RNA sequence: GGGAACGACUCGAGUAGAGUCGAAAAGCGGUUGUGCAGGGUCAUGACGUCGAUGCUGGUGGCCACCUCGCCGCGCAGGCUCUCGUUGGUCCAGCAGAGACGGCCGCCCUUGCGCGAGCAGAAGGGGGGCAGGACGUCGAGCAUGUCCUCGGGCGGGGAUGCUUGAAUGAUUCGUCAUUCAAGCAUCAAAAGAAACAACAACAACAAC
Reactivity to 2A3 in 0.01 (KOAc 150mM, MgCl2 10mM, bicine 150mM(pH8.5), 24C), signal-to-noise 1, nucleotides 027 to 156: g020c050g100g030u050u040g000u130g000c000a000g000g010g030u050c080a170u230g000a060c010g000u020c020g010a040u010g020c000u000g000g130u060g160g020c010c010a030c000c020u080c060g000c000c000g030c040g080c220a030g000g000c010u050c030u050c180g160u130u080g000g040u030c000c000a000g000c010a020g000a000g000a020c000g020g000c010c010g140c030c030c000u060u030g000c000g020c030g020a080g000c000a020g050a100a100g020g000g010g000g040g010c020a000g030g000a000c060g000u020c000g000a040g030c120a050u070g020u050c020c010u030c000g030g000g070c150g000g040g000
Conditions: 150 mM KOAc, 10 mM MgCl2 and 150 mM bicine (pH 8.5), 24 C. The record gives the reactivity of an RNA of 207 nucleotides to 2A3. Reactivities are given for positions 27 through 156. The 2A3 profile rests on 749 reads. The data come from the RNA Mapping Database (RMDB), library OK3TST.